[RMDB]
Conditions: 150 mM KOAc, 10 mM MgCl2 and 150 mM bicine (pH 8.5), 24 C. This 207-nucleotide RNA was probed chemically with 2A3.
RNA sequence: GGGAACGACUCGAGUAGAGUCGAAAACGCUGGGUCGCAGCCACAGAUGAUUGGUCACCUGAAGCGCGCACGGGUGAGCCAAUUUGUUCUGUGGACGACCUGUGCUGAAGCGCGCACGGCAACCGAAAGGUGCGAAACUGACGUGUUCGCACGUCAGCCUCCCCCUUAUCUUCGGAUAAGGGGGAGGAAAAGAAACAACAACAACAAC
Reactivity to 2A3 in 0.01 (KOAc 150mM, MgCl2 10mM, bicine 150mM(pH8.5), 24C), signal-to-noise 3, nucleotides 027 to 156: c090g020c030u100g000g000g000u000c000g010c070a120g040c010c010a010c000a000g060a050u250g010a030u090u050g000g010u030c000a000c010c000u060g050a240a060g050c060g000c000g000c060a020c030g000g010g000u040g010a100g120c010c020a010a030u030u030u150g220u270u120c010u000g010u000g000g010a000c010g000a000c000c020u010g030u040g000c030u120g020a070a010g000c030g010c000g010c010a010c030g080g000c020a150a110c020c000g040a070a050a080g020g000u010g010c010g020a070a060a040c030u030g000a000c000g010u000g040u140u140c200g000c140a000c000g000u000c000a010g000